[RMDB]
Chemical mapping of a 207-nucleotide RNA with 2A3.
Values are in units of 0.01, from 0 to 300, in steps of 10.
Conditions: 150 mM KOAc, 10 mM MgCl2 and 150 mM bicine (pH 8.5), 24 C.

RNA sequence: GGGAACGACUCGAGUAGAGUCGAAAACUAUUUAGAAAAAGGGUAAUUAUCCCCAUCACUUCUCCAUUUAACAGUUCAAUUUGGCCUGUUCUUAAGCCUGGAAAGGUUGAAUGGAACCUCAUAAUGGCUUAUCUCAGCUUUAAUUCUUGGUCCCACACCAUUUAAUGCUCUUCGGAGCAUUAAAUGGAAAAGAAACAACAACAACAAC
Reactivity to 2A3 in 0.01 (KOAc 150mM, MgCl2 10mM, bicine 150mM(pH8.5), 24C), signal-to-noise 2, nucleotides 027 to 156: c000u040a120u210u150u180a120g020a010a100a030a040a030g050g010g020u080a140a100u280u120a090u170c000c000c000c000a040u140c080a050c020u090u030c080u050c000c040a020u010u080u000a070a020c010a010g050u140u070c060a060a160u060u040u150g020g010c000c010u100g080u120u050c030u140u160a060a000g010c010c010u080g050g050a090a030a020g040g010u000u020g060a070a020u030g020g060a020a030c010c010u040c040a060u090a180a050u060g030g040c020u030u060a040u110c110u030c020a030g000c000u040u070u140a050a040u230u030c020u060u030g050g000u060c010c000c010a010c010a000